[RMDB]
Structure probing data (2A3) for a 207-nucleotide construct. Conditions: 150 mM KOAc, 10 mM MgCl2 and 150 mM bicine (pH 8.5), 24 C. 2A3 is a SHAPE reagent: it acylates the 2'-hydroxyl of flexible nucleotides of all four kinds. Reactivities are given for positions 27 through 156.
RNA sequence: GGGAACGACUCGAGUAGAGUCGAAAAUACUGAUUCGUCAGUACGCAACCGUAGGCCAGAACUACUCUGCAAUGAGGACGACGAUCUUUGCUUCGAAAGAGGCAAAGGGAGUCCUUGACAGAGCUGGCCUAAACGGCUCAGGGCAGUUCGCUGCCAACCAAGUGGAAGACUUCGGUCUUCCACUUGGAAAAGAAACAACAACAACAAC
Reactivity to 2A3 in 0.01 (KOAc 150mM, MgCl2 10mM, bicine 150mM(pH8.5), 24C), signal-to-noise 1, nucleotides 027 to 156: u080a000c000u000g020a060u050u150c280g080u000c130a000g000u000a100c140g040c100a040a010c030c010g040u040a040g000g020c030c050a010g030a100a020c100u160a050c000u300c020u040g030c050a060a170u300g000a040g000g010a000c020g040a050c000g050a030u000c010u030u000u000g000c020u000u000c000g050a080a130a060g000a000g010g000c000a000a000a000g000g000g000a000g000u030c000c000u000u030g030a050c000a000g020a000g000c000u000g000g000c010c000u000a000a000a000c010g000g030c090u150c170a090g010g030g000c000a030g000u030u040c160g020c040u000g000c000c000a050a070